RNA sequence: GGGAACGACUCGAGUAGAGUCGAAAAUCGUGUCAUUGCAGUAUAUAGCCCCAACGGGUGCUGUGAUGGGUAGGGGAGCGUCGUCUGCCGGGUGAAGCGGCACUGGAAGGUAGUCGUGGACGGUUGAACACGUAUAUCUGUUCGCAGAUAUACGUGUAAAAGAAACAACAACAACAAC
Reactivity to 2A3 in 0.01 (KOAc 150mM, MgCl2 10mM, bicine 150mM(pH8.5), 24C), signal-to-noise 6, nucleotides 027 to 126: u080c030g000u030g050u070c020a020u000u060g000c010a000g070u020a100u020a040u110a270g040c020c000c010c010a040a050c090g020g000g000u060g010c010u020g010u030g030a040u030g010g040g080u120a060g010g010g010g010a020g020c040g040u040c020g030u010c060u050g010c010c030g040g010g130u060g020a050a000g010c010g020g010c020a010c010u030g030g070a070a010g050g010u080a070g020u040c030g030u040g020g020a020c020g040g010u020u060g020a030
Reactivity to DMS in 0.01 (KOAc 150mM, MgCl2 10mM, bicine 150mM(pH8.5), 24C), signal-to-noise 9, nucleotides 027 to 126: u010c090g020u000g010u010c030a030u000u000g010c010a030g010u010a120u010a130u010a150g010c010c000c010c080a110a130c300g010g020g020u000g000c020u000g010u000g010a030u000g000g000g010u010a080g000g000g010g000a070g010c060g020u000c050g010u000c040u000g010c020c020g010g000g010u010g010a090a150g010c030g010g010c020a030c040u000g010g020a110a080g000g000u000a080g020u000c030g020u000g000g000a040c050g000g010u000u000g010a110
Description: This 177-nucleotide RNA was probed chemically with 2A3 and DMS. The reactions ran in a buffer of 150 mM KOAc, 10 mM MgCl2 and 150 mM bicine (pH 8.5), at 24 C. For 2A3 the reverse transcriptase was SuperScript II with manganese. For DMS, 42,104 sequencing reads were counted. It was measured as part of the RMDB library OK2TRN.